[RMDB]
RNA sequence: GGGAACGACUCGAGUAGAGUCGAAAAGUAAAGAAAGCAACGGGGCUAGCCGUCAGGUGUUCCUCCCCCCGAGAGGGGAAGAGUGAGGCUUAUCCCGGGGAACUCGGCGAAUCGUCCCCGCAUGGCAGACGUCUCUUGUUCGCAAGAGACAAAAGAAACAACAACAACAAC
Reactivity to DMS in 0.01 (KOAc 150mM, MgCl2 10mM, bicine 150mM(pH8.5), 24C), signal-to-noise 7, nucleotides 027 to 129: g000u030a040a080a060g000a070a090a060g060c060a100a140c070g000g010g000g000c060u000a050g020c030c010g020u000c060a050g010g010u030g020u000u000c010c000u000c020c030c010c000c000c000g010a160g030a180g010g000g000g000a010a030g020a080g050u040g000a100g000g000c040u020u010a120u040c000c000c000g000g000g040g040a020a030c030u020c000g000g000c010g020a060a070u010c080g040u040c030c030c020c050g000c110a100u040g000g000c070a010g000a160c180
Reactivity to 2A3 in 0.01 (KOAc 150mM, MgCl2 10mM, bicine 150mM(pH8.5), 24C), signal-to-noise 9, nucleotides 027 to 129: g070u140a040a060a050g080a100a100a010g050c040a040a050c010g010g010g030g000c040u040a010g010c020c020g060u040c030a080g010g160u110g080u120u020c000c010u030c020c010c000c000c000c010g120a090g070a110g070g010g000g010a020a010g030a010g040u150g030a030g040g000c000u050u070a080u110c000c010c000g000g000g000g000a010a010c000u000c020g020g010c010g020a030a040u060c030g090u140c020c010c000c000g010c020a060u110g070g000c030a020g020a090c060